The record gives the reactivity of an RNA of 177 nucleotides to DMS and 2A3. As a SHAPE reagent, 2A3 marks flexible, mostly unpaired nucleotides at the ribose 2'-OH. It was measured as part of the RMDB library OK2TST.
RNA sequence: GGGAACGACUCGAGUAGAGUCGAAAAGCUAGAAAAUGGAAUUUAGUUACAAAUAUGGGGAAAUUUUUGGAUCCAUUAGCGGAUAAAUUAUUAGUUGCAAGUGCUUUAAUUGUACUUGUGCAACUAGCAUUAGUCAGAUCUUCGGAUCUGACUAAUGAAAAGAAACAACAACAACAAC
Reactivity to DMS in 0.01 (KOAc 150mM, MgCl2 10mM, bicine 150mM(pH8.5), 24C), signal-to-noise 1, nucleotides 027 to 126: g000c000u000a060g000a050a080a110a050u010g020g000a100a160u010u000u000a120g000u000u000a120c050a030a110a060u010a090u020g020g000g010g010a130a100a120u000u000u000u000u020g030g010a190u000c010c000a030u000u000a020g030c060g010g000a120u010a010a120a060u000u010a120u000u000a020g020u010u000g000c000a030a030g030u000g010c010u010u000u000a070a070u010u000g030u010a010c010u000u000g020u000g010c000a000a010c010u000a030g010
Reactivity to 2A3 in 0.01 (KOAc 150mM, MgCl2 10mM, bicine 150mM(pH8.5), 24C), signal-to-noise 1, nucleotides 027 to 126: g000c000u060a070g150a030a300a080a000u010g040g010a060a030u130u200u180a220g060u270u100a110c030a040a040a040u140a170u170g030g070g030g110a000a040a120u230u180u000u050u050g040g080a040u000c000c000a000u030u080a010g000c100g080g020a040u100a150a120a040u290u150a070u090u050a080g000u000u000g000c010a010a010g000u000g010c040u140u210u300a090a080u210u140g000u010a000c000u010u010g150u040g070c000a080a000c000u030a000g000